Structure probing data (2A3) for a 177-nucleotide construct.
RNA sequence: GGGAACGACUCGAGUAGAGUCGAAAAACGCUGUACGCAGCGAACUUGGGGUGCGCAGUCUACGCACGCCAGGCCGUCUGUGAGGUUGCCAUCCGUACCGGCACGGGGUGGCACAGACGAAAGGAAAAGGCGGUAGAGUUUUCGAACUCUACCGCCUAAAAGAAACAACAACAACAAC
Reactivity to 2A3 in 0.01 (KOAc 150mM, MgCl2 10mM, bicine 150mM(pH8.5), 24C), signal-to-noise 1, nucleotides 027 to 126: a000c000g090c000u100g080u000a000c040g000c130a000g000c000g080a020a000c000u010u010g000g000g000g000u000g030c050g120c090a000g170u050c050u100a040c000g000c000a000c000g090c000c000a000g040g000c020c000g000u000c000u000g090u000g040a160g000g040u170u040g060c010c000a060u030c000c060g180u020a290c000c040g060g000c000a000c170g030g000g010g020u020g000g010c010a000c000a000g020a000c000g230a020a120a000g200g000a050a010a000